[RMDB]
RNA sequence: GGGAACGACUCGAGUAGAGUCGAAAAAUCUAUGCUAGACAUGUGGUACGUGAUACUAGCGUACGGUACCAUGCGUACCAUGAUACUAGGCACAUGCAUGUCGCGUCACACGUCAUGGAUCACGUGAUCGUGUGUAGGAGUUCGCUCCUACACACGAAAAAGAAACAACAACAACAAC
Reactivity to DMS in 0.01 (KOAc 150mM, MgCl2 10mM, bicine 150mM(pH8.5), 24C), signal-to-noise 4, nucleotides 027 to 126: a060u010c040u000a040u010g030c110u020a080g010a070c040a000u000g010u000g010g060u010a060c100g020u000g000a060u010a120c020u000a010g010c050g030u000a110c120g010g010u000a030c030c030a100u010g040c150g010u000a020c020c010a290u000g010a100u020a050c030u000a030g010g010c010a040c080a100u000g010c010a050u000g020u000c030g010c090g000u000c140a150c080a030c040g000u000c020a040u000g000g000a170u010c090a060c030g000u000g000a060
Reactivity to 2A3 in 0.01 (KOAc 150mM, MgCl2 10mM, bicine 150mM(pH8.5), 24C), signal-to-noise 5, nucleotides 027 to 126: a000u070c060u060a080u110g050c030u090a020g020a040c010a020u020g010u040g080g040u180a040c070g030u000g030a050u070a290c020u000a020g010c000g030u020a060c030g000g000u010a020c020c040a140u270g030c090g030u010a000c000c020a010u070g060a020u020a020c040u040a050g020g050c040a020c000a050u170g000c010a030u030g020u030c020g000c020g110u090c030a060c010a010c070g050u030c020a100u080g050g030a060u080c030a010c100g040u030g040a060
The data come from the RNA Mapping Database (RMDB), library OK2TRN. The record gives the reactivity of an RNA of 177 nucleotides to DMS and 2A3. For 2A3, 5,823 sequencing reads were counted. For 2A3 the reverse transcriptase was SuperScript II with manganese. DMS adducts were read by reverse transcription with MarathonRT.